[RMDB]
RNA sequence: GGGAACGACUCGAGUAGAGUCGAAAAGCCUUUACGUUCGCGUAAAGGCAAAGGAGGCUCGAGACUGUGUGUGCGUAACGAGCCUCCACGCACACACAGACAAAACCCUGCUGUUCGCAGCAGGGAAUCAUGAGGUAUUCUUCGGAAUACCUCAUGAAAAAGAAACAACAACAACAAC
Reactivity to 2A3 in 0.01 (KOAc 150mM, MgCl2 10mM, bicine 150mM(pH8.5), 24C), signal-to-noise 2, nucleotides 027 to 126: g000c000c000u000u000u000a010c000g010u020u080c280g000c010g100u010a020a000a000g000g000c010a000a010a000g000g010a010g010g030c000u000c090g090a090g050a100c060u000g000u020g010u000g010u000g040c020g050u050a160a140c170g030a060g110c020c000u000c010c000a000c000g000c000a000c010a010c000a000c000a010g040a040c040a020a090a030a050c000c000c010u000g020c010u010g030u020u040c200g020c090a010g000c000a000g010g020g000a010a010
Reactivity to DMS in 0.01 (KOAc 150mM, MgCl2 10mM, bicine 150mM(pH8.5), 24C), signal-to-noise 3, nucleotides 027 to 126: g000c000c000u000u000u000a000c000g030u010u010c240g030c010g030u000a010a010a010g000g030c000a010a010a090g000g000a130g000g020c020u000c020g010a130g000a210c000u010g000u010g000u000g010u000g010c000g000u000a120a100c110g010a080g010c030c010u000c020c040a000c010g000c000a000c000a010c000a000c000a020g010a170c130a060a060a090a090c000c000c000u000g010c000u000g000u000u020c160g010c000a000g020c000a020g010g010g000a010a010
Source: RMDB library M2PK50, as collected in RNAgym. Structure probing data (2A3 and DMS) for a 177-nucleotide construct. The RNA was probed in 150 mM KOAc, 10 mM MgCl2 and 150 mM bicine (pH 8.5) at 24 C. DMS (dimethyl sulfate) methylates the pairing face of unpaired adenines and cytosines. Values cover nucleotides 27 to 126. For DMS, 4,109 sequencing reads were counted.